An RNA of 177 nucleotides, treated with 2A3 and DMS and read out base by base. For 2A3, 1,770 sequencing reads were counted. For DMS, 1,211 sequencing reads were counted. 2A3 is a SHAPE reagent: it acylates the 2'-hydroxyl of flexible nucleotides of all four kinds.
[RMDB]
RNA sequence: GGGAACGACUCGAGUAGAGUCGAAAAGAUAUGGAAUGGUUGUAGACAUGCUCCGCUCGUGGGUUCGGAAACGAACCGGCGAGCAACAGCUACACCCAUUCCUAAGUCAAAUCGUCGUUCGCGACGAGUAAAAGCUCCAGUUCGCUGGAGCUUUUACAAAAGAAACAACAACAACAAC
Reactivity to 2A3 in 0.01 (KOAc 150mM, MgCl2 10mM, bicine 150mM(pH8.5), 24C), signal-to-noise 1, nucleotides 027 to 126: g010a000u010a060u110g000g000a010a000u000g050g030u010u020g010u020a030g090a300c150a300u170g050c080u170c190c210g010c010u010c020g000u090g300g030g000u040u000c030g000g010a100a090a030c010g000a000a000c000c020g060g050c000g000a000g070c000a000a000c000a010g020c030u010a000c010a000c000c000c010a000u000u000c000c000u010a050a050g070u010c020a090a080a110u080c020g020u030c000g030u050u070c280g000c030g120a010c010g010a000
Reactivity to DMS in 0.01 (KOAc 150mM, MgCl2 10mM, bicine 150mM(pH8.5), 24C), signal-to-noise 2, nucleotides 027 to 126: g020a070u000a300u020g020g000a000a000u000g000g000u000u000g000u000a000g000a120c090a250u010g000c130u020c190c170g020c010u010c000g110u000g010g010g020u000u000c000g040g000a110a070a190c010g030a010a010c000c000g010g030c000g000a000g000c000a000a010c050a030g000c000u000a000c000a020c070c000c000a020u000u010c000c010u000a100a070g000u000c020a090a220a270u000c000g000u000c000g010u000u000c220g040c030g020a000c020g000a040